[RMDB]
RNA sequence: GGGAACGACUCGAGUAGAGUCGAAAAGACGCCUGUGUGGCGAAGCGAGCAUGUGAAAGAGCCGCACAGUCCAUCUAAUAUAAAGCGGCAAGAUGGAUUGCUCGCGAAAAGAUCCAUAUCACUGAGAACCUACUAUCGGGUUCGCCCGAUAGUAGGUAAAAGAAACAACAACAACAAC
Reactivity to DMS in 0.01 (KOAc 150mM, MgCl2 10mM, bicine 150mM(pH8.5), 24C), signal-to-noise 2, nucleotides 027 to 126: g010a080c200g010c110c010u000g000u010g010u000g000g000c010g020a130a050g020c000g000a000g020c020a130u000g010u030g000a110a090a120g000a240g050c060c010g000c010a010c020a060g010u000c050c000a030u020c020u000a120a100u050a100u040a070a070a070g110c030g000g010c110a140a030g000a060u000g000g000a030u030u020g010c000u000c020g040c030g010a120a020a090a090g000a020u040c050c000a050u010a020u040c130a120c070u000g000a110g000a210
Reactivity to 2A3 in 0.01 (KOAc 150mM, MgCl2 10mM, bicine 150mM(pH8.5), 24C), signal-to-noise 3, nucleotides 027 to 126: g050a030c060g030c010c000u040g000u030g020u080g070g000c000g030a070a000g000c000g010a040g000c000a040u100g050u040g160a110a090a090g120a030g000c000c010g000c020a010c020a020g020u000c010c010a050u010c010u060a060a130u190a090u120a130a180a060g050c030g070g040c060a050a020g020a050u010g000g040a000u000u090g010c010u000c020g000c000g010a000a020a000a030g050a020u000c030c000a040u050a020u210c030a020c110u100g040a020g040a110
This 177-nucleotide RNA was probed chemically with DMS and 2A3. It was measured as part of the RMDB library OK1LIB. The RNA was probed in 150 mM KOAc, 10 mM MgCl2 and 150 mM bicine (pH 8.5) at 24 C. Reactivities are rounded to 0.1 and cut off at 0 and 3. For DMS the reverse transcriptase was MarathonRT.